[RMDB]
RNA sequence: GGGAACGACUCGAGUAGAGUCGAAAAGAUAUGGAUAGGCGUGCGGAGUGCUCGCGGUCGGAAACGACCGACCCGAGCCUCGGAUAGCGCUCAUCCUAAGUCAAAGGACAGCGUUCGCGCUGUCCAACCCUAUCGCUAUCUUCGGAUAGCGAUAGGGAAAAGAAACAACAACAACAAC
Reactivity to DMS in 0.01 (KOAc 150mM, MgCl2 10mM, bicine 150mM(pH8.5), 24C), signal-to-noise 2, nucleotides 027 to 126: g010a030u010a300u000g000g010a020u010a010g000g000c000g000u000g000c050g020g010a070g000u010g000c000u000c010g020c300g000g020u000c080g000g020a170a090a190c300g000a110c000c000g020a010c020c020c000g000a010g000c000c000u000c020g000g050a090u010a180g020c000g000c000u010c050a030u010c000c020u020a040a120g000u000c040a070a070a200g000g000a000c030a030g010c000g010u000u010c240g000c000g030c000u000g010u000c000c000a000a010
Reactivity to 2A3 in 0.01 (KOAc 150mM, MgCl2 10mM, bicine 150mM(pH8.5), 24C), signal-to-noise 2, nucleotides 027 to 126: g030a030u100a030u180g040g000a030u020a080g000g020c040g010u090g020c140g150g010a010g010u300g030c000u010c040g070c250g010g000u000c040g020g060a190a260a170c190g260a280c030c000g050a000c000c000c000g010a000g000c000c010u000c020g020g020a090u100a050g040c000g000c010u020c000a000u000c010c020u030a140a050g080u010c060a170a100a100g010g020a010c000a010g010c000g030u070u130c240g040c040g020c050u010g000u000c000c000a000a000

This 177-nucleotide RNA was probed chemically with DMS and 2A3. It was measured as part of the RMDB library TTRDEL. For 2A3, 2,649 sequencing reads were counted. For 2A3 the reverse transcriptase was SuperScript II with manganese. The RNA was probed in 150 mM KOAc, 10 mM MgCl2 and 150 mM bicine (pH 8.5) at 24 C.